Description:
This 207-nucleotide RNA was probed chemically with 2A3 and DMS. High DMS reactivity at an A or C suggests that its Watson-Crick edge is free. It was measured as part of the RMDB library M2RFPK. The 2A3 profile rests on 861 reads. The reactions ran in a buffer of 150 mM KOAc, 10 mM MgCl2 and 150 mM bicine (pH 8.5), at 24 C.
RNA sequence: GGGAACGACUCGAGUAGAGUCGAAAAACGCUAACGAGGCGCUCGCUAUUGCUGCGUAACUGACGGCCUGACGGUCUGACGUUACAAAGCUAAAGCGCGGUUGGACCCCACCGGGCAACAGAAGGGGAAAGGCGACCCCGUUUCGACGGGGUCGCAAGUAAUCACAUCAGUUCGCUGAUGUGAUUACAAAAGAAACAACAACAACAAC
Reactivity to 2A3 in 0.01 (KOAc 150mM, MgCl2 10mM, bicine 150mM(pH8.5), 24C), signal-to-noise 1, nucleotides 027 to 156: a020c000g000c020u080a040a030c080g040a130g130g000c050g000c050u110c050g000c020u070a090u200u190g000c010u010g000c000g000u000a000a000c000u000g010a010c010g010g010c020c010u090g100a070c060g020g010u010c000u010g020a010c020g010u000u000a000c010a010a020a000g010c000u000a000a000a000g000c000g010c000g000g020u050u150g220g030a060c000c040c030c000a000c000c010g120g130g000c020a030a000c000a000g040a010a000g020g000g000g090a000a110a000g110g050c000g000a000c040c020c020c000g040u070u040u150c190g040a030c020g010g000g000g000u000c000g000c010a000a000
Reactivity to DMS in 0.01 (KOAc 150mM, MgCl2 10mM, bicine 150mM(pH8.5), 24C), signal-to-noise 1, nucleotides 027 to 156: a020c010g000c000u000a000a070c040g030a160g000g020c000g050c020u040c000g020c050u000a280u000u000g000c010u000g040c300g010u000a040a050c000u000g010a300c280g020g000c000c000u000g040a120c300g020g030u050c260u000g000a300c220g010u020u010a030c040a080a300a070g020c030u000a030a110a090g030c030g030c030g070g030u000u000g000g020a060c010c010c000c000a050c030c060g000g030g020c060a140a160c080a060g000a090a110g010g000g020g010a040a100a060g000g010c030g000a010c030c000c000c000g030u010u000u020c130g000a120c000g000g030g090g000u000c010g030c000a010a000